RNA sequence: GGGAACGACUCGAGUAGAGUCGAAAAGCUGUUCUGUUCGCAGAACAGCAAAGGGAAGCAUCUCAAGCAUUUCAAGGAAGGGAGCACCAAGCAUUUCAAAAAAAACGGAUAAGUUCGCUUAUCCGAACCUUAACAAGCGGUUCGCCGCUUGUUAAGGAAAAGAAACAACAACAACAAC
Reactivity to DMS in 0.01 (KOAc 150mM, MgCl2 10mM, bicine 150mM(pH8.5), 24C), signal-to-noise 1, nucleotides 027 to 126: g000c010u020g000u000u010c020u040g050u000u000c220g050c000a010g000a010a010c000a000g000c020a000a050a120g010g000g010a040a100g000c010a070u000c040u000c050a130a120g000c060a050u000u000u010c110a150a080g000g010a100a060g040g000g010a080g010c040a070c060c060a060a060g020c100a070u020u000u000c020a000a000a000a070a020a090a070a210c010g000g020a000u000a000a000g000u000u020c240g020c000u000u000a030u000c000c000g000a050a050
Reactivity to 2A3 in 0.01 (KOAc 150mM, MgCl2 10mM, bicine 150mM(pH8.5), 24C), signal-to-noise 1, nucleotides 027 to 126: g000c020u010g010u000u000c000u000g060u030u100c220g040c030a010g020a020a000c000a000g000c000a000a050a000g070g000g020a090a030g020c030a240u050c040u000c040a000a100g060c020a140u060u200u220c060a070a040g080g060a000a080g010g020g000a020g030c020a020c030c040a020a000g000c020a060u080u190u240c140a120a020a000a020a000a000a020a040c010g000g000a000u010a010a000g040u030u130c250g040c050u000u000a010u000c000c000g000a010a010